[RMDB]
About this RNA
Conditions: 150 mM KOAc, 10 mM MgCl2 and 150 mM bicine (pH 8.5), 24 C. An RNA of 177 nucleotides, treated with DMS and 2A3 and read out base by base. The DMS profile rests on 1,327 reads. It was measured as part of the RMDB library TTRDES. Reactivities are given for positions 27 through 126. For 2A3 the reverse transcriptase was SuperScript II with manganese. For 2A3, 2,148 sequencing reads were counted.

RNA sequence: GGGAACGACUCGAGUAGAGUCGAAAAGAUAUGGAUGAGCGAACGAUAAGUAUCCAUCGGAAACGAUGGAAUACUUUUGACGUUCGUGCUCAUCCUAAGUCAAAACCACCGGCUUCGGCCGGUGGAAGGUGGUAAUCUUGUUCGCAAGAUUACCACCAAAAGAAACAACAACAACAAC
Reactivity to DMS in 0.01 (KOAc 150mM, MgCl2 10mM, bicine 150mM(pH8.5), 24C), signal-to-noise 1, nucleotides 027 to 126: g000a050u000a110u010g010g010a010u000g000a030g020c010g000a020a010c000g040a140u020a000a010g000u000a000u000c000c000a010u000c000g000g000a030a030a090c000g010a010u000g000g000a000a080u000a000c000u000u000u000u000g030a200c090g030u000u000c000g020u000g080c020u000c010a000u010c000c010u000a010a120g000u010c010a080a050a130a220c010c000a000c000c000g020g010c000u010u000c300g030g000c000c010g000g030u000g000g000a010a000
Reactivity to 2A3 in 0.01 (KOAc 150mM, MgCl2 10mM, bicine 150mM(pH8.5), 24C), signal-to-noise 1, nucleotides 027 to 126: g040a000u010a020u100g000g000a020u010g010a000g010c020g000a000a000c030g140a180u060a300a020g020u000a010u000c000c000a000u000c010g030g000a040a040a000c000g000a010u020g000g000a100a000u020a000c010u080u050u030u210g300a130c050g000u000u020c010g070u080g000c000u020c020a010u000c010c000u000a020a000g060u020c050a000a000a040a230c030c000a000c000c020g000g000c000u080u200c300g200g020c020c000g000g000u000g010g020a000a030